Background:
Structure probing data (2A3) for a 207-nucleotide construct. 2A3 adducts were read by reverse transcription with SuperScript II with manganese.
[RMDB]
RNA sequence: GGGAACGACUCGAGUAGAGUCGAAAAUCCAUGGGCUAGAUACGGGUCCUAAAUGAAGUGGACUUGCGCUUAAGUACUGGCCUGGGUGCUUAAGAAGAGGAUUUACAGACUAGCGUUUUAAUGAAGCCCCGACAUACGGCGUCUUAUUUCGCGAAAUGAAACUGCUAUACUUCGGUAUAGCAGUUUCAAAAGAAACAACAACAACAAC
Reactivity to 2A3 in 0.01 (KOAc 150mM, MgCl2 10mM, bicine 150mM(pH8.5), 24C), signal-to-noise 1, nucleotides 027 to 156: u020c010c010a010u060g040g070g010c060u100a060g060a210u200a280c150g140g000g000u000c000c010u040a060a040a130u260g100a210a030g020u090g030g010a010c010u040u210g040c010g000c010u000u020a000a030g000u000a010c030u010g010g000c000c000u000g000g000g000u000g000c000u000u000a000a000g000a010a030g000a020g050g000a080u140u220u220a080c030a010g020a000c010u000a000g000c010g010u080u000u020u040a030a040u140g070a070a010g010c000c030c050c060g020a050c060a100u300a130c030g030g000c020g010u010c040u040u050a060u010u050u020c000g000c010g000a030a020a020u050